Source: RMDB library OK2TRN, as collected in RNAgym. This 177-nucleotide RNA was probed chemically with DMS and 2A3. DMS adducts were read by reverse transcription with MarathonRT. The DMS profile rests on 2,405 reads. The RNA was probed in 150 mM KOAc, 10 mM MgCl2 and 150 mM bicine (pH 8.5) at 24 C. High DMS reactivity at an A or C suggests that its Watson-Crick edge is free.
RNA sequence: GGGAACGACUCGAGUAGAGUCGAAAAGGUGAGAGUAGCGCGGAAAGUCGUAACGGGGCGAAAGCGUUGCUCGAACAGUUAGGGCUGGGUAAACGUCUGGAUCAUCUUCCGGCACAGCUUUCCGGCGAAUAAUUUUGUCGUUCGCGACAAAAUUAUUAAAAGAAACAACAACAACAAC
Reactivity to DMS in 0.01 (KOAc 150mM, MgCl2 10mM, bicine 150mM(pH8.5), 24C), signal-to-noise 3, nucleotides 027 to 126: g030g000u000g010a300g000a070g040u000a030g020c000g030c000g000g000a090a090a180g010u000c050g020u010a090a230c300g010g020g000g010c050g000a080a100a180g010c020g020u000u010g020c000u010c020g010a130a090c040a050g010u010u000a100g000g000g030c010u000g000g000g020u000a040a040a090c080g010u020c020u010g010g000a110u010c250a100u000c160u000u000c000c010g010g000c110a050c040a050g010c030u000u000u000c020c010g010g020c110g000
Reactivity to 2A3 in 0.01 (KOAc 150mM, MgCl2 10mM, bicine 150mM(pH8.5), 24C), signal-to-noise 1, nucleotides 027 to 126: g130g020u040g030a080g000a010g030u040a000g060c090g000c020g050g070a100a070a030g060u050c010g010u080a060a040c110g060g070g070g060c020g000a080a000a010g000c000g000u010u010g000c010u010c020g000a000a010c010a010g020u030u200a110g000g100g030c010u000g060g040g040u190a110a190a010c050g060u000c080u090g000g060a080u100c060a050u010c130u100u100c020c010g040g000c080a010c000a060g020c000u020u050u000c000c000g090g000c030g030